The record gives the reactivity of an RNA of 177 nucleotides to DMS and 2A3. Source: RMDB library M2PK50, as collected in RNAgym. Conditions: 150 mM KOAc, 10 mM MgCl2 and 150 mM bicine (pH 8.5), 24 C.

RNA sequence: GGGAACGACUCGAGUAGAGUCGAAAAUUGUACACCUUCGGGUGUACAAGCUGUCUAGACGCUAGCAAACGAUCAAAGCUAGCGACUAGACUUUAUUGAUCGCGACGUGCGCUUUCGAGCGCACGAAGUGACAAGGGUACUUCGGUACCCUUGUCACAAAAGAAACAACAACAACAAC
Reactivity to DMS in 0.01 (KOAc 150mM, MgCl2 10mM, bicine 150mM(pH8.5), 24C), signal-to-noise 1, nucleotides 027 to 126: u010u000g010u000a010c000a000c010c010u000u020c210g010g010g020u000g000u010a000c000a000a040g000c200u000g000u000c000u000a000g000a110c000g030c000u000a000g050c000a030a090a170c180g000a150u000c150a030a190a190g000c000u000a000g000c000g020a020c000u010a010g000a000c000u000u000u010a060u010u000g020a090u000c030g010c140g050a270c020g000u010g010c000g000c000u000u000u000c140g000a010g020c000g000c000a000c020g000a000a050
Reactivity to 2A3 in 0.01 (KOAc 150mM, MgCl2 10mM, bicine 150mM(pH8.5), 24C), signal-to-noise 1, nucleotides 027 to 126: u020u000g000u000a000c000a000c000c000u010u060c170g160g000g000u010g020u030a000c000a000a000g000c020u010g030u000c000u000a000g010a020c000g000c010u000a000g010c040a070a000a210c130g210a170u180c100a150a040a000g040c000u000a000g010c010g000a000c000u000a000g000a000c010u000u020u010a080u030u080g060a050u170c080g000c060g130a070c000g000u000g010c050g000c030u070u020u030c170g100a030g010c000g000c000a010c010g000a000a000
For DMS, 1,080 sequencing reads were counted. For 2A3 the reverse transcriptase was SuperScript II with manganese.